[RMDB]
RNA sequence: GGGAACGACUCGAGUAGAGUCGAAAAACUUUAUCAGAUGACAUAUUUGACCACCAAACUUCUGUUGGAGCAGGGCUGAUUUGCCAAACAGACAGCAACCUUGCAGACUUAGUCGAUGGCUAGAAUUAAGACUCAAGGUCACUUCAGGGCCUGUCACGUAGAGUUAGUACUUCGGUACUAACUCUACAAAAGAAACAACAACAACAAC
Reactivity to DMS in 0.01 (KOAc 150mM, MgCl2 10mM, bicine 150mM(pH8.5), 24C), signal-to-noise 1, nucleotides 027 to 156: a090c070u000u000u020a090u010c050a060g000a100u000g020a120c060a090u000a090u010u010u010g000a060c020c050a130c000c010a060a100a140c030u000u000c060u010g020u000u010g020g050a130g040c030a110g010g000g060c000u010g010a170u010u000u030g000c040c000a090a100a140c110a170g010a050c050a040g030c020a040a030c000c000u010u000g040c070a160g010a190c000u000u020a000g040u000c020g020a100u000g000g020c100u010a130g020a070a110u000u000a070a130g000a080c010u000c010a040a060g000g010u010c080a000c090u000u000c020a070g000g020g020c030c020u000g010u000c000a080c190
Reactivity to 2A3 in 0.01 (KOAc 150mM, MgCl2 10mM, bicine 150mM(pH8.5), 24C), signal-to-noise 3, nucleotides 027 to 156: a000c060u120u140u140a120u140c030a030g020a170u080g040a070c070a110u240a130u080u070u130g110a120c010c030a000c040c030a080a060a130c090u100u070c030u070g080u120u090g050g030a050g000c050a050g020g020g000c000u030g050a140u070u020u100g040c040c000a100a050a050c040a020g040a020c020a020g010c020a030a000c000c010u000u030g020c040a020g030a080c030u040u030a000g010u000c010g110a120u110g170g030c060u110a040g020a170a030u110u070a080a030g010a020c010u030c090a030a040g010g010u080c020a010c060u070u080c040a060g020g030g020c000c000u040g020u030c050a010c140
The record gives the reactivity of an RNA of 207 nucleotides to DMS and 2A3. 2A3 adducts were read by reverse transcription with SuperScript II with manganese. For DMS, 1,799 sequencing reads were counted. The RNA was probed in 150 mM KOAc, 10 mM MgCl2 and 150 mM bicine (pH 8.5) at 24 C. It was measured as part of the RMDB library OK3TST.